Conditions: 150 mM KOAc, 10 mM MgCl2 and 150 mM bicine (pH 8.5), 24 C.
Structure probing data (2A3 and DMS) for a 207-nucleotide construct.
For 2A3 the reverse transcriptase was SuperScript II with manganese.
The 2A3 profile rests on 1,244 reads.
As a SHAPE reagent, 2A3 marks flexible, mostly unpaired nucleotides at the ribose 2'-OH.
For DMS the reverse transcriptase was MarathonRT.
RNA sequence: GGGAACGACUCGAGUAGAGUCGAAAAAAGGGGAAAGCAAAGUAAUUUGCGCAGCCUUUAAGGGAUGUUACUCAUGCCACGAGAAAUUCAAUAUAUAAGAGCUCUCGUCUAUUGCAAGAUAUAAGUUACUGAGCAUGUUAUGUUGGAAAGAUAACAUCUUCUUAUAAAUGUUCGCAUUUAUAAGAAGAAAAGAAACAACAACAACAAC
Reactivity to 2A3 in 0.01 (KOAc 150mM, MgCl2 10mM, bicine 150mM(pH8.5), 24C), signal-to-noise 3, nucleotides 027 to 156: a000a000g100g020g000g020a100a100a060g000c030a030a010a040g020u150a060a250u020u020u070g010c050g000c020a030g050c010c000u060u080u060a020a040g030g010g000a010u060g020u130u090a020c010u000c060a020u060g030c030c010a020c020g010a000g030a040a070a020u160u100c040a070a070u070a050u100a020u050a220a110g030a040g050c010u000c000u000c020g030u000c020u060a100u150u200g020c040a040a000g080a050u040a020u040a200a050g040u040u020a040c040u050g020a020g040c020a020u040g030u030u100a040u060g000u010u030g080g040a300a040a030g050a090u100a050a030c010a040u000
Reactivity to DMS in 0.01 (KOAc 150mM, MgCl2 10mM, bicine 150mM(pH8.5), 24C), signal-to-noise 1, nucleotides 027 to 156: a030a030g010g030g000g000a060a010a180g000c000a010a040a060g040u000a040a160u000u000u030g020c020g000c090a300g020c040c030u000u000u000a160a050g010g000g050a020u000g030u000u010a130c040u000c040a140u000g000c000c110a040c050g010a080g000a130a050a100u000u000c050a080a140u030a110u010a130u000a110a160g000a080g000c010u000c000u000c010g020u000c030u000a110u010u010g040c000a130a110g020a150u000a060u000a010a110g020u000u010a070c020u000g000a020g000c000a110u010g000u010u000a190u030g030u000u000g010g000a060a120a110g030a120u000a060a070c060a200u000